[RMDB]
RNA sequence: GGGAACGACUCGAGUAGAGUCGAAAACAAAGGUCGAGUCUAUGAUCCACGGCCUGGAAAGCAAGCUUGACAGUAAGCUGGACGAGAAAUUUGGGGCCCUCUUCCCUCAGCUGAAGGCAGAGCUCAAAUGUGACUACCUUUUCGAAGGUAGUCACAUAAAAGAAACAACAACAACAAC
Reactivity to 2A3 in 0.01 (KOAc 150mM, MgCl2 10mM, bicine 150mM(pH8.5), 24C), signal-to-noise 2, nucleotides 027 to 126: c010a020a070a030g030g020u010c010g010a000g010u050c070u250a200u290g050a080u090c030c000a010c060g050g000c000c000u000g020g030a030a040a000g040c050a020a020g000c030u060u060g070a070c060a080g030u070a030a010g010c030u030g000g040a030c050g020a040g060a010a100a050u150u130u100g020g000g020g030c010c000c030u060c010u040u010c000c040c000u020c000a040g000c060u050g010a020a030g040g020c030a020g020a010g030c040u030c070a090a130
Reactivity to DMS in 0.01 (KOAc 150mM, MgCl2 10mM, bicine 150mM(pH8.5), 24C), signal-to-noise 3, nucleotides 027 to 126: c080a050a150a070g000g010u000c000g020a150g000u010c040u010a160u020g020a080u010c030c060a160c060g010g020c040c020u000g000g010a140a110a080g020c100a110a090g000c010u000u000g010a160c110a050g000u010a070a130g010c030u000g000g000a100c060g000a080g000a060a040a080u000u000u010g000g000g000g020c150c030c000u000c050u000u000c060c020c020u010c050a090g010c070u000g000a090a100g000g000c060a080g000a060g010c030u000c110a030a050